[RMDB]
RNA sequence: GGGAACGACUCGAGUAGAGUCGAAAAGGAUGCGUCAGCACAAUCUGAUCUGUGCCACCCGCUGGAUGGAAAACGACGCGUCUCCCCAGGUGAUUGCCGACUGGGAAAAGGGGAAACAAAACAUCAGCAUUACCAAAGAUUUCGAUCUUUGGUAAUGAAAAGAAACAACAACAACAAC
Reactivity to DMS in 0.01 (KOAc 150mM, MgCl2 10mM, bicine 150mM(pH8.5), 24C), signal-to-noise 8, nucleotides 027 to 126: g010g010a010u000g010c030g010u000c010a220g010c040a030c070a050a080u040c090u030g020a060u010c120u000g000u010g000c020c090a160c050c010c040g000c090u030g000g020a070u030g000g000a080a050a080a100c160g000a020c020g020c000g010u000c000u010c060c000c010c030a070g000g010u010g010a110u010u030g010c070c020g010a070c050u000g000g010g010a060a040a060a060g010g000g010g010a090a080a070c180a060a060a070a100c180a060u030c120a050g010
Reactivity to 2A3 in 0.01 (KOAc 150mM, MgCl2 10mM, bicine 150mM(pH8.5), 24C), signal-to-noise 9, nucleotides 027 to 126: g050g000a010u020g000c000g000u020c020a020g010c030a010c020a040a080u090c070u130g040a060u040c050u060g050u030g020c010c030a060c010c010c020g060c120u140g070g080a160u090g040g060a030a060a030a060c060g010a010c000g000c010g010u000c050u060c010c000c000c000a010g030g050u090g080a220u080u140g050c030c020g060a110c050u050g000g030g000a020a050a030a040g050g000g000g000a040a090a010c100a020a070a020a010c050a060u070c020a000g030